[RMDB]
RNA sequence: GGGAACGACUCGAGUAGAGUCGAAAAGCUGUCGCGUGAGCGACAGCAAAGACUAUACUUUCAGGGAUCAUUUCUAUAGUGUGUUACUAGAGAAGUUUCUCUGAACGUGUAGAGCACCGAAAACCACGAGGAAGAGAGGUAGCGUUUUCUCCUGAGCGUGAAGCCGGCUUUCUGGCGUUGCUUGGCUGCAACUGCCGUCAGCCAUUGAUGAUCGUUCUUCUCUCCGUAUUGGGGAGUGAGAGGGAGAGAACGCGGUCUGAGUGGUUAAUCAGCAAUUCGUUGCUGAUAAAAGAAACAACAACAACAAC
Reactivity to 2A3 in 0.01 (KOAc 150mM, MgCl2 10mM, bicine 150mM(pH8.5), 24C), signal-to-noise 2, nucleotides 027 to 266: g000c000u000g000u000c000g000c020g040u090g100a050g030c000g000a000c000a000g010c010a000a010a000g000a000c000u000a000u010a000c000u010u020u000c000a000g000g000g000a010u020c010a020u030u020u020c010u010a040u010a010g000u030g020u020g040u130u160a010c000u000a000g000a000g010a020a000g010u000u040u000c000u000c000u000g000a000a000c020g000u000g010u000a000g010a000g010c030a050c030c010g030a080a050a000a000c000c010a010c010g010a000g040g020a030a030g110a010g030a020g140g100u110a020g000c000g000u000u000u000u000c000u000c000c010u030g030a000g020c000g000u010g010a010a000g070c040c040g010g000c020u030u020u010c120u170g020g000c000g000u000u000g010c010u070u100g170g040c120u040g000c000a000a000c010u150g000c000c000g000u000c000a000g000c010c010a030u060u180g040a030u010g010a000u020c000g000u000u010c000u060u010c000u000c000u000c000c000g010u070a200u100u300g000g000g010g000a010g000u100g020a140g020a050g030g000g000a000g000a000g010a000a000c000g000c000g000g000u000c000u000g000a010g000u000g000g000u000u000a010
Reactivity to DMS in 0.01 (KOAc 150mM, MgCl2 10mM, bicine 150mM(pH8.5), 24C), signal-to-noise 6, nucleotides 027 to 266: g010c000u000g020u000c000g030c000g020u020g000a300g030c010g020a010c000a010g030c000a010a060a140g000a100c000u000a000u000a010c000u000u010u000c010a010g000g010g010a020u000c130a020u000u000u000c010u000a060u000a010g010u000g020u020g020u030u030a020c010u000a020g010a020g010a020a020g010u010u010u000c000u000c000u000g000a010a010c070g000u000g000u000a000g000a080g010c080a290c020c010g010a080a100a080a030c020c010a010c010g010a300g010g000a040a120g010a170g010a120g020g020u010a150g010c000g000u000u000u000u000c000u000c000c000u000g000a030g010c010g000u000g000a180a160g000c090c300g000g000c010u000u010u000c010u010g080g020c010g000u000u000g000c000u000u010g010g000c130u010g000c010a000a000c010u010g080c000c000g000u000c020a010g010c000c000a060u010u010g000a050u000g000a180u000c020g020u000u000c000u010u000c010u000c000u000c000c000g020u020a100u030u030g010g010g000g000a010g000u010g010a040g030a150g000g000g000a010g000a020g010a000a000c030g010c010g000g020u000c000u000g000a300g010u000g000g000u000u000a040